[RMDB]
RNA sequence: GGGAACGACUCGAGUAGAGUCGAAAAAGGAUGUUAGGUUCGCAUGGUGCACUAUUGUGUUAUUAGUAACUAAGUAAGCUUACAAUCGAAAAUGUUUAACCAUAAAAGGGUAAAAUGGUGUAAGACAGAUACCCUCUGAGCUUCGGCUCAGAGGGAACAAUUUAAAGAACUUCGGUUCUUUAAAUUGAAAAGAAACAACAACAACAAC
Reactivity to DMS in 0.01 (KOAc 150mM, MgCl2 10mM, bicine 150mM(pH8.5), 24C), signal-to-noise 2, nucleotides 027 to 156: a100g010g000a060u010g000u000u000a050g030g030u000u000c010g040c010a090u000g040g000u000g010c080a060c050u000a030u000u000g010u000g010u000u000a050u000u000a100g030u010a090a120c010u000a060a110g040u000a050a090g000c060u000u000a040c020a060a100u010c090g000a110a050a080a070u010g010u000u000u010a050a050c020c020a030u010a060a100a160a220g000g020g060u000a030a060a050a020u000g010g000u000g030u000a030a080g000a080c060a100g040a160u000a050c000c010c010u000c000u000g010a030g030c000u000u000c300g060g020c000u000c010a010g000a000g010g020g020a010a010
Reactivity to 2A3 in 0.01 (KOAc 150mM, MgCl2 10mM, bicine 150mM(pH8.5), 24C), signal-to-noise 2, nucleotides 027 to 156: a000g090g010a040u060g020u110u060a020g010g000u030u050c020g000c110a070u130g040g000u020g010c000a020c040u070a110u180u140g010u000g010u030u020a050u020u020a060g070u070a080a020c050u000a050a080g100u040a040a020g070c000u050u050a010c060a070a110u060c050g040a010a120a000a060u020g020u030u130u070a020a010c000c000a010u060a050a150a010a000g070g030g000u070a100a150a020a050u030g010g000u000g010u020a000a040g010a050c030a010g040a020u090a070c000c000c000u000c000u000g000a010g000c000u020u050c180g060g000c000u010c000a010g000a000g010g000g000a000a000